[RMDB]
RNA sequence: GGGAACGACUCGAGUAGAGUCGAAAAGACGCCUGAUGGCGAACGUGCGCAAGAUAAGAAUGGUGGUAUAUACUGCCCAGAAUAACUAAUGGACGGCAGAGCGCACGAACCACCACUGUCCACCAGAGGUCGGAUUUAAUUUCGAUUAAAUCCGACCAAAAGAAACAACAACAACAAC
Reactivity to DMS in 0.01 (KOAc 150mM, MgCl2 10mM, bicine 150mM(pH8.5), 24C), signal-to-noise 2, nucleotides 027 to 126: g050a210c000g000c020c000u050g010a190u080g000g050c000g040a240a160c000g060u000g010c020g060c010a240a110g010a190u040a060a030g000a110a130u000g000g040u000g000g000u040a100u000a080u080a060c050u030g000c000c000c060a010g020a040a010u000a120a130c160u060a040a130u000g000g000a110c100g010g010c100a000g010a260g010c000g020c000a000c000g000a100a010c060c080a160c120c030a080c080u080g010u000c000c090a050c000c090a120g000a300
Reactivity to 2A3 in 0.01 (KOAc 150mM, MgCl2 10mM, bicine 150mM(pH8.5), 24C), signal-to-noise 3, nucleotides 027 to 126: g080a010c010g010c010c030u270g200a120u300g020g000c020g010a000a010c010g010u010g000c000g000c020a080a140g100a280u280a080a050g040a080a070u050g000g010u010g000g000u010a050u000a020u030a150c010u000g000c000c000c000a060g080a060a090u210a210a020c090u120a050a110u050g030g020a040c030g010g000c020a000g040a000g020c000g000c000a000c010g000a040a000c000c000a030c000c030a040c030u040g030u000c000c000a000c000c000a030g060a020

Source information: The data come from the RNA Mapping Database (RMDB), library OK1LIB. The record gives the reactivity of an RNA of 177 nucleotides to DMS and 2A3. For 2A3, 2,002 sequencing reads were counted.